The record gives the reactivity of an RNA of 177 nucleotides to 2A3 and DMS. The DMS profile rests on 601 reads. Reactivities are given for positions 27 through 126. For 2A3, 790 sequencing reads were counted.
RNA sequence: GGGAACGACUCGAGUAGAGUCGAAAAUAUUAGGUUCAAGUUCAGGUUCAAUCGUUGCGAUGCAUGUGUUAAAAGAUUACCCUGAAGUCGUUAAAAAGAUUGCAUUUCACGAACCACCAAUUAAUACCAUCCUCAAUUCCUUCGGGAAUUGAGGAUGAAAAGAAACAACAACAACAAC
Reactivity to 2A3 in 0.01 (KOAc 150mM, MgCl2 10mM, bicine 150mM(pH8.5), 24C), signal-to-noise 1, nucleotides 027 to 126: u110a000u120u190a080g000g000u020u050c070a010a060g080u010u090c010a010g070g020u020u020c000a000a010u030c020g050u040u190g020c030g020a010u000g020c060a060u090g020u070g000u070u090a020a110a000a170g130a070u060u090a040c030c010c000u030g040a110a040g000u010c020g000u030u110a110a130a020a020a020g030a020u030u040g000c030a060u000u020u270c020a020c060g000a000a000c000c000a000c000c000a080a080u080u070a020a030u040a190c000
Reactivity to DMS in 0.01 (KOAc 150mM, MgCl2 10mM, bicine 150mM(pH8.5), 24C), signal-to-noise 1, nucleotides 027 to 126: u040a060u010u000a060g040g000u000u000c090a060a080g010u030u000c110a090g000g020u000u000c070a010a040u000c030g000u000u000g010c000g010a010u010g060c120a050u000g010u000g000u010u000a010a050a120a150g000a280u010u000a020c090c000c040u000g000a140a170g000u000c000g030u010u010a000a050a020a140a070g000a030u000u000g010c120a040u000u000u020c180a070c130g010a040a060c030c040a150c030c040a060a030u070u000a040a030u000a090c300